[RMDB]
RNA sequence: GGGAACGACUCGAGUAGAGUCGAAAAUAAAUAAAGGUUUCUCAAAAACAGCGUAAUGACCUGGGAGAGAACAACGAUAACAAUGAACCAUUCCCAUGAGUGUUGCCUGGCAAUAUUUGUGGGGAUUACUUACCGUAACAUUCGUGUUACGGUAAGUAAAAGAAACAACAACAACAAC
Reactivity to DMS in 0.01 (KOAc 150mM, MgCl2 10mM, bicine 150mM(pH8.5), 24C), signal-to-noise 2, nucleotides 027 to 126: u020a060a100a120u070a070a090a110g000g000u020u000u000c000u000c040a030a140a040a180a150c070a050g000c010g010u000a070a070u100g000a080c260c000u000g010g010g000a160g010a050g000a040a020c120a070a060c090g010a080u080a050a070c100a040a060u040g030a150a130c060c050a100u000u010c000c000c000a000u010g000a000g020u040g010u000u000g000c010c150u030g030g020c020a000a000u000a000u000u000u000g030u000g010g000g010g020a020u000u000
Reactivity to 2A3 in 0.01 (KOAc 150mM, MgCl2 10mM, bicine 150mM(pH8.5), 24C), signal-to-noise 6, nucleotides 027 to 126: u100a010a020a010u160a030a100a030g110g010u010u040u030c000u000c010a100a090a070a050a100c010a010g030c020g090u070a180a060u180g050a050c000c000u000g000g040g000a060g010a000g020a020a010c040a040a020c060g070a060u100a170a030c080a080a170u110g050a080a040c030c030a020u030u020c000c000c010a010u020g010a000g020u030g030u020u020g030c160c300u210g110g040c000a000a000u000a000u020u010u000g010u010g000g000g000g000a000u000u030
Source: RMDB libraries RFM100 and RFMREP, as collected in RNAgym.
An RNA of 177 nucleotides, treated with DMS and 2A3 and read out base by base.
For 2A3 the reverse transcriptase was SuperScript II with manganese.
DMS adducts were read by reverse transcription with MarathonRT.
Reactivities are given for positions 27 through 126.
The RNA was probed in 150 mM KOAc, 10 mM MgCl2 and 150 mM bicine (pH 8.5) at 24 C.